[RMDB]
RNA sequence: GGGAACGACUCGAGUAGAGUCGAAAACGGGGUGCGGGGACGCAAGGAGAUGGAAGAGGUCGGUAUCCGUCUCCACGCCUAUGCCCACAUCCGCGAGUUCCUCCCGGUGUGCAGGGGCAUGGGGCUCAGACCAAGCGAUAUUCGUAUCGCUUGGUCUAAAAGAAACAACAACAACAAC
Reactivity to DMS in 0.01 (KOAc 150mM, MgCl2 10mM, bicine 150mM(pH8.5), 24C), signal-to-noise 2, nucleotides 027 to 126: c120g000g010g000g030u010g010c070g010g000g030g010a100c230g020c100a130a230g020g010a020g000a020u000g010g020a010a090g010a120g000g010u000c060g000g000u000a080u000c000c000g000u000c000u000c000c000a080c280g000c000c030u000a060u000g000c010c000c000a060c020a020u000c000c010g010c280g010a090g000u010u020c110c020u000c010c020c010g010g000u000g010u000g020c090a100g010g000g000g000c020a020u000g000g020g010g000c140u040c080
Reactivity to 2A3 in 0.01 (KOAc 150mM, MgCl2 10mM, bicine 150mM(pH8.5), 24C), signal-to-noise 2, nucleotides 027 to 126: c030g010g000g000g010u120g000c040g010g000g030g030a030c080g020c050a080a150g020g000a010g000a010u010g020g030a050a040g070a070g070g110u170c060g000g000u040a050u020c000c000g000u000c000u010c030c010a010c010g010c000c000u040a020u040g030c030c010c010a010c000a000u030c020c010g030c040g010a040g020u120u050c010c040u030c000c000c010g000g010u130g020u060g040c090a100g000g030g000g040c020a020u070g030g000g020g030c040u070c080

The record gives the reactivity of an RNA of 177 nucleotides to DMS and 2A3. For DMS the reverse transcriptase was MarathonRT. 2A3 adducts were read by reverse transcription with SuperScript II with manganese. The RNA was probed in 150 mM KOAc, 10 mM MgCl2 and 150 mM bicine (pH 8.5) at 24 C. It was measured as part of the RMDB library OK2TST.